About this RNA:
Chemical mapping of a 177-nucleotide RNA with 2A3 and DMS. It was measured as part of the RMDB library OK2TST. High DMS reactivity at an A or C suggests that its Watson-Crick edge is free. The DMS profile rests on 1,391 reads. 2A3 adducts were read by reverse transcription with SuperScript II with manganese.
RNA sequence: GGGAACGACUCGAGUAGAGUCGAAAAGGACAUGCAGCAGCGGUGCAACGCCUCCGACCCCGCGGCCUACGCGCAGCUGGUGUUCCAGACCUGCGACAUCAACGCCUUCCUCUCAGAGGUAGGUCCACUCACCGACUUUAUUCGUAAAGUCGGUGAGAAAAGAAACAACAACAACAAC
Reactivity to 2A3 in 0.01 (KOAc 150mM, MgCl2 10mM, bicine 150mM(pH8.5), 24C), signal-to-noise 1, nucleotides 027 to 126: g010g000a040c030a010u120g010c010a160g000c000a000g040c000g030g000u060g000c060a120a060c020g010c010c010u080c010c040g060a180c000c000c000c000g030c040g020g020c010c030u100a060c090g050c020g010c020a020g000c030u000g030g070u070g130u120u050c000c000a020g020a040c020c020u040g020c030g060a080c000a060u110c070a120a050c070g010c000c010u060u020c000c000u030c020u020c100a050g020a010g040g030u000a010g000g020u030c030c010a100
Reactivity to DMS in 0.01 (KOAc 150mM, MgCl2 10mM, bicine 150mM(pH8.5), 24C), signal-to-noise 2, nucleotides 027 to 126: g000g030a040c090a060u000g010c060a080g000c020a080g020c040g010g060u010g000c060a100a130c210g010c030c030u000c030c020g000a180c070c030c010c040g000c150g010g010c020c010u000a080c120g020c020g010c030a070g000c020u010g010g000u010g020u010u010c000c000a050g000a170c090c010u000g010c010g020a130c030a110u000c100a090a100c190g000c030c010u000u000c010c010u010c010u000c170a140g000a020g020g020u000a000g020g020u000c100c080a070
The reactions ran in a buffer of 150 mM KOAc, 10 mM MgCl2 and 150 mM bicine (pH 8.5), at 24 C.